[RMDB]
RNA sequence: GGGAACGACUCGAGUAGAGUCGAAAAACCUUUGUGUCGAGGGAGAAUAUGAGGAGAGGGCUCUCCCAUUGGGAGAGCCUCCCCACCUCCACAUAUUCAUCGAUCUCGACACUCUGGUAAAACAAUUCAGUAUGUCUUCGGACAUACUGAAUUGUAACAAUCACUAGGUGUUCGCACCUAGUGAUUGAAAAGAAACAACAACAACAAC
Reactivity to DMS in 0.01 (KOAc 150mM, MgCl2 10mM, bicine 150mM(pH8.5), 24C), signal-to-noise 2, nucleotides 027 to 156: a070c020c000u000u010u000g030u000g020u010c000g010a080g000g030g000a070g030a060a020u000a050u010g000a110g020g000a060g030a300g020g020g000c010u030c020u020c000c000c040a240u010u010g080g030g000a030g020a030g020c010c000u000c060c020c000c010a250c080c000u010c000c110a150c050a010u010a020u010u000c020a300u000c150g000a070u010c020u000c000g010a030c010a010c000u010c040u020g010g050u000a030a070a110a130c010a000a010u010u000c030a010g020u010a020u000g000u000c000u010u020c300g050g000a060c000a010u000a010c000u000g010a000a010u000u010g020u000a050a160
Reactivity to 2A3 in 0.01 (KOAc 150mM, MgCl2 10mM, bicine 150mM(pH8.5), 24C), signal-to-noise 4, nucleotides 027 to 156: a000c000c000u020u020u010g010u000g000u010c000g030a000g020g020g000a020g010a010a010u010a010u020g030a060g010g010a030g010a020g020g000g000c020u000c030u020c040c070c140a290u170u300g000g010g000a000g020a020g010c030c000u020c000c010c010c000a010c010c000u000c000c000a020c000a020u020a000u000u030c060a260u270c080g050a060u000c010u000c000g000a000c000a000c000u000c000u000g000g010u050a090a100a010a010c000a000a000u010u000c000a000g010u000a000u000g000u000c010u010u120c250g110g000a000c000a000u000a000c000u010g000a000a000u000u000g000u000a000a000